An RNA of 207 nucleotides, treated with 2A3 and DMS and read out base by base. The RNA was probed in 150 mM KOAc, 10 mM MgCl2 and 150 mM bicine (pH 8.5) at 24 C. 2A3 adducts were read by reverse transcription with SuperScript II with manganese. It was measured as part of the RMDB library OK3TST. The 2A3 profile rests on 4,495 reads.

RNA sequence: GGGAACGACUCGAGUAGAGUCGAAAACGGUGAUUCUGGACGGAAUGUUAUUUUAGGCGGAACAUCACAUACGAUUACUGCAAGCGGUGCCGGCAUCGCAACAUCGUCAACGAUUGCUUACGGUUCUGGAUGCACGUUAACUAAUAACGCAUCGUGCACCUACCUGCUUAUUCGUAAGCAGGUAGGUAAAAGAAACAACAACAACAAC
Reactivity to 2A3 in 0.01 (KOAc 150mM, MgCl2 10mM, bicine 150mM(pH8.5), 24C), signal-to-noise 6, nucleotides 027 to 156: c040g010g000u050g030a210u060u050c010u080g030g080a040c040g040g080a130a050u150g070u150u120a170u090u160u050u120a100g040g000c030g010g010a040a020c010a060u060c020a040c000a060u180a090c080g070a040u070u080a060c030u080g030c030a010a200g030c010g000g010u010g040c020c050g050g000c020a010u040c050g030c080a020a030c010a070u030c010g080u070c070a040a050c050g080a110u070u190g020c040u060u070a010c020g000g030u040u010c010u030g060g000a040u060g000c050a010c100g010u050u070a080a050c040u080a120a130u080a150a040c030g000c040a020u030c020g020u050g000c010
Reactivity to DMS in 0.01 (KOAc 150mM, MgCl2 10mM, bicine 150mM(pH8.5), 24C), signal-to-noise 2, nucleotides 027 to 156: c070g000g030u020g000a100u000u000c040u010g040g010a120c040g000g000a070a080u000g010u000u000a080u000u010u000u000a140g020g000c040g000g020a120a110c040a080u000c050a080c070a130u000a080c080g020a180u000u000a140c050u010g020c060a080a170g010c070g040g000u000g010c120c010g020g000c100a160u000c110g010c030a070a050c040a000u010c050g000u000c040a090a070c050g000a090u000u000g030c010u000u000a150c120g000g010u010u000c030u010g020g000a050u010g020c000a040c000g000u000u000a020a230c130u020a090a130u000a030a090c070g000c040a060u000c000g000u020g000c060